[RMDB]
RNA sequence: GGGAACGACUCGAGUAGAGUCGAAAAACUCGUGAUCGAGAUCGUUCACGUACACGUGAGUACGAGUACGUUCUCGAGUGAGAUCACGUGAGAGUGAACACGAGAGAACACGAGUGUGAGUGUGUGUGAACGAGUACUCGUGUACGAUCGUUCGAUCGGCUAGAUAUGUCUUCGGACAUAUCUAGCCAAAAGAAACAACAACAACAAC
Reactivity to 2A3 in 0.01 (KOAc 150mM, MgCl2 10mM, bicine 150mM(pH8.5), 24C), signal-to-noise 4, nucleotides 027 to 156: a030c030u000c010g020u050g040a080u060c010g000a010g010a020u010c000g000u000u000c000a000c000g010u000a010c000a000c000g100u120g250a070g050u070a000c000g010a010g010u020a040c080g000u030u030c010u000c020g030a010g010u000g000a040g030a160u020c000a000c030g060u170g160a110g000a020g090u010g020a220a050c000a000c010g010a030g000a000g000a010a000c010a000c010g060a100g020u030g010u020g050a090g010u010g010u000g000u010g010u010g010a010a030c010g010a010g130u120a100c010u020c000g010u030g060u080a020c020g010a060u060c060g030u070u140c060g030a120u150c030
Reactivity to DMS in 0.01 (KOAc 150mM, MgCl2 10mM, bicine 150mM(pH8.5), 24C), signal-to-noise 1, nucleotides 027 to 156: a030c050u000c000g000u000g040a080u000c020g010a060g000a120u000c010g050u000u000c040a090c010g010u000a000c000a040c070g000u010g000a210g040u000a070c020g000a220g050u000a090c120g050u000u000c000u000c010g010a300g000u000g020a080g020a120u010c020a000c010g000u020g000a300g000a260g040u000g000a050a300c000a000c010g000a300g050a030g010a020a040c040a010c070g040a300g030u000g000u000g050a110g030u000g030u020g130u010g000u010g020a050a030c040g000a210g000u000a030c030u000c070g000u000g010u000a010c060g000a020u010c050g000u000u000c080g000a150u010c070